[RMDB]
RNA sequence: GGGAACGACUCGAGUAGAGUCGAAAACAGAUUGUCCAUCAUAAUCGGUCAUUAUAUCACAGUUCCAUUAACAUGAGUUACAGCUACCUGAGCUGUCAUUAUCUGACCUGAAGCUAUAGGCUUUCCAGUAAAUGUAACUCUAAAAACUAGAAUGUUACAUUACGUCGGAGUUCGCUCCGACGUAAUGAAAAGAAACAACAACAACAAC
Reactivity to 2A3 in 0.01 (KOAc 150mM, MgCl2 10mM, bicine 150mM(pH8.5), 24C), signal-to-noise 5, nucleotides 027 to 156: c030a020g090a100u070u100g020u020c040c010a080u140c060a100u200a170a050u180c090g000g030u020c040a050u060u210a120u070a070u200c050a040c000a130g020u040u000c050c000a040u130u080a100a100c060a110u140g000a000g000u010u020a010c000a010g020c050u050a080c040c030u010g060a020g050c120u070g070u050c000a010u020u250a110u210c110u040g040a030c010c000u070g050a040a000g000c000u050a060u120a300g250g000c010u070u080u080c030c030a000g010u030a000a080a050u010g000u010a000a000c000u000c000u010a030a100a050a020a050c070u060a080g050a190a070u040g030u050u020a020
Reactivity to DMS in 0.01 (KOAc 150mM, MgCl2 10mM, bicine 150mM(pH8.5), 24C), signal-to-noise 2, nucleotides 027 to 156: c090a050g020a100u000u000g030u020c030c170a080u020c110a030u040a100a110u020c020g040g020u010c020a210u010u010a110u000a020u000c080a090c060a050g010u010u000c030c060a120u010u020a050a170c040a190u020g000a090g070u000u010a000c040a020g010c000u000a030c060c030u000g000a070g050c030u000g010u010c050a100u020u000a090u000c240u010g030a030c070c100u020g000a300a060g010c040u000a130u010a110g010g040c000u000u000u010c140c030a080g020u000a050a040a060u030g000u010a000a010c010u000c010u000a020a080a110a100a050c080u000a100g050a040a130u010g010u040u000a150
Chemical mapping of a 207-nucleotide RNA with 2A3 and DMS. High 2A3 reactivity points to a flexible backbone, as in loops and unpaired stretches. The RNA was probed in 150 mM KOAc, 10 mM MgCl2 and 150 mM bicine (pH 8.5) at 24 C. For 2A3, 2,328 sequencing reads were counted. Source: RMDB library OK3TST, as collected in RNAgym.